Structure probing data (2A3 and DMS) for a 207-nucleotide construct. 2A3 adducts were read by reverse transcription with SuperScript II with manganese. Reactivities are given for positions 27 through 156. It was measured as part of the RMDB library RNAMAK.
[RMDB]
RNA sequence: GGGAACGACUCGAGUAGAGUCGAAAAGGGGUCAGCCAGAGUCGAUGCUAAUACGAUAUUGUCAGAUCUGAAGCCUCCACGGAUCUUGGAUUUAUAUCGGAUAACAUCGACGACGAAGGCUGACGGAGGCACCCAAACAACAGCUUCGGCUGUUGAAGAAAUAUUUACUCUUCGGAGUAAAUAUUUCAAAAGAAACAACAACAACAAC
Reactivity to 2A3 in 0.01 (KOAc 150mM, MgCl2 10mM, bicine 150mM(pH8.5), 24C), signal-to-noise 3, nucleotides 027 to 156: g050g010g080g000u020c000a010g000c010c010a040g020a010g110u000c000g000a000u010g020c070u150a080a070u200a290c020g010a010u010a030u040u220g060u060c030a000g000a000u000c000u010g040a110a030g050c000c020u010c010c000a010c000g010g000a010u010c000u080u230g140g000a050u060u300u070a140u110a000u030c000g000g000a040u060a180a020c000a010u010c000g000a000c010g000a020c020g050a080a030g000g000c000u000g000a000c000g000g000a000g010g000c020a050c000c000c000a070a070a040c010a000a000c000a010g010c010u090u090c220g180g000c010u010g010u000u000g010a040a020
Reactivity to DMS in 0.01 (KOAc 150mM, MgCl2 10mM, bicine 150mM(pH8.5), 24C), signal-to-noise 1, nucleotides 027 to 156: g000g010g060g010u000c000a040g030c040c010a230g000a300g060u000c030g030a020u010g000c000u000a140a130u000a080c010g010a050u000a020u010u000g000u000c040a060g000a040u010c010u000g000a020a130g010c060c030u000c000c040a300c020g020g020a020u010c010u020u000g080g000a060u010u010u000a040u000a030u010c010g000g000a120u000a060a000c000a020u000c000g010a060c000g010a150c100g040a180a170g020g020c020u000g000a020c000g020g050a040g030g050c030a110c010c070c020a030a080a280c030a000a000c000a030g000c010u000u000c300g020g000c000u010g020u000u000g000a090a260